Chemical mapping of a 177-nucleotide RNA with 2A3 and DMS. The reactions ran in a buffer of 150 mM KOAc, 10 mM MgCl2 and 150 mM bicine (pH 8.5), at 24 C. Reactivities are given for positions 27 through 126.
RNA sequence: GGGAACGACUCGAGUAGAGUCGAAAAGAAGACGUGACGAAAAGUCACGAAAACAUGGUAAACGCAGACACCAUGAAAGAUCGAAAAACGAUCAAUGCGUAAACCACAGAGAGAUCUGUGGAAAAGAGGUAUUAAAUGGAUUCGUCCAUUUAAUACCAAAAGAAACAACAACAACAAC
Reactivity to 2A3 in 0.01 (KOAc 150mM, MgCl2 10mM, bicine 150mM(pH8.5), 24C), signal-to-noise 9, nucleotides 027 to 126: g140a050a010g100a030c010g000u000g010a000c010g080a130a120a050a060g000u010c000a000c000g030a020a020a000a010c000a000u010g000g020u090a100a080a020c020g010c020a010g040a060c020a020c060c010a000u010g050a080a040a000g000a000u010c020g090a080a030a010a060a170c030g000a000u010c040a050a050u160g020c030g060u090a070a050a070c000c000a000c000a000g000a000g000a000g010a070u000c000u000g010u020g010g030a020a020a000a020g110a030
Reactivity to DMS in 0.01 (KOAc 150mM, MgCl2 10mM, bicine 150mM(pH8.5), 24C), signal-to-noise 7, nucleotides 027 to 126: g030a160a120g020a160c020g010u010g010a010c010g000a110a110a080a140g010u000c000a000c000g010a060a040a090a220c030a030u000g000g010u020a080a080a040c020g000c060a040g010a300c220a050c000c010a010u010g000a080a090a080g000a000u000c020g000a080a080a080a150a210c010g000a000u000c020a090a060u020g000c040g000u000a070a100a160c000c000a000c000a000g010a010g000a180g000a110u000c000u010g010u000g000g000a010a020a100a070g000a120